[RMDB]
RNA sequence: GGGAACGACUCGAGUAGAGUCGAAAAGAGGGCGGCAACGCCCGGGCCUCUGAGGUCCUGGAGCUGUCCUGCGGGCCCAGCGCUCAGAAGUGAUGAAUUGAUCAGAUAGAUGAGGCUGGGCUUAUCCACCUUUCAUCUUCUUCGGAAGAUGAAAGGUAAAAGAAACAACAACAACAAC
Reactivity to DMS in 0.01 (KOAc 150mM, MgCl2 10mM, bicine 150mM(pH8.5), 24C), signal-to-noise 3, nucleotides 027 to 126: g000a060g010g010g000c020g000g010c030a100a180c260g010c010c030c020g000g020g000c010c000u010c300u050g000a080g030g000u000c010c000u000g000g010a170g000c010u000g020u000c010c010u020g030c060g010g010g010c000c010c000a020g000c010g000c000u000c010a020g000a220a130g010u010g020a070u020g010a200a180u060u080g010a040u030c010a040g010a120u010a100g000a300u000g000a000g000g000c000u000g000g000g020c000u000u000a010u000c040c030
Reactivity to 2A3 in 0.01 (KOAc 150mM, MgCl2 10mM, bicine 150mM(pH8.5), 24C), signal-to-noise 7, nucleotides 027 to 126: g200a020g000g020g000c010g010g000c030a110a040c110g130c000c000c020g000g000g000c010c000u100c300u300g120a090g020g000u020c010c010u020g000g000a020g000c010u000g010u020c000c010u050g100c040g000g020g000c000c000c000a010g000c240g110c000u010c000a040g010a120a060g130u020g050a060u030g040a090a300u250u190g030a060u050c020a020g120a200u130a050g130a060u030g010a000g000g000c000u000g000g000g000c000u000u010a000u000c000c000

The data come from the RNA Mapping Database (RMDB), libraries RFM100 and RFMREP. Structure probing data (DMS and 2A3) for a 177-nucleotide construct. 2A3 adducts were read by reverse transcription with SuperScript II with manganese. Conditions: 150 mM KOAc, 10 mM MgCl2 and 150 mM bicine (pH 8.5), 24 C. Values cover nucleotides 27 to 126.